Structure probing data (2A3 and DMS) for a 177-nucleotide construct.
DMS adducts were read by reverse transcription with MarathonRT.
The 2A3 profile rests on 926 reads.
The reactions ran in a buffer of 150 mM KOAc, 10 mM MgCl2 and 150 mM bicine (pH 8.5), at 24 C.
For DMS, 717 sequencing reads were counted.
DMS (dimethyl sulfate) methylates the pairing face of unpaired adenines and cytosines.

RNA sequence: GGGAACGACUCGAGUAGAGUCGAAAACGCAUCACAAUGCGGUAGAGCAUCAUAAAUAGAGGCCUGCCGGGUUUAUCUUCAUAAGCUACUGAUCCUUAUAGCGCACAGUUAUGAAAAUACGCCGUGCCGUACUGCUUGGUUUCGACCAAGCAGUACGAAAAGAAACAACAACAACAAC
Reactivity to 2A3 in 0.01 (KOAc 150mM, MgCl2 10mM, bicine 150mM(pH8.5), 24C), signal-to-noise 1, nucleotides 027 to 126: c020g000c000a010u030c020a020c070a130a240u140g010c000g000g020u040a010g060a030g010c020a010u060c000a020u210a300a200a020u210a270g040a060g040g090c000c000u010g030c020c000g030g000g040u080u040u030a020u010c010u080u010c020a070u080a070a050g060c000u020a050c040u120g070a170u080c020c030u140u200a190u140a150g040c010g050c020a040c020a190g010u040u040a020u020g040a000a050a000a000u060a020c010g000c020c030g030u020g000c010
Reactivity to DMS in 0.01 (KOAc 150mM, MgCl2 10mM, bicine 150mM(pH8.5), 24C), signal-to-noise 1, nucleotides 027 to 126: c120g000c040a020u000c120a090c270a100a050u000g000c000g040g020u010a010g000a130g040c000a030u010c030a190u020a080a150a140u010a210g010a030g010g010c000c010u000g040c010c010g000g000g010u000u000u000a010u010c010u000u000c040a050u010a010a090g010c180u000a070c100u000g020a070u010c080c080u000u010a120u010a100g030c030g000c090a110c190a060g020u000u000a000u000g000a040a000a050a020u000a040c120g030c000c020g000u000g000c080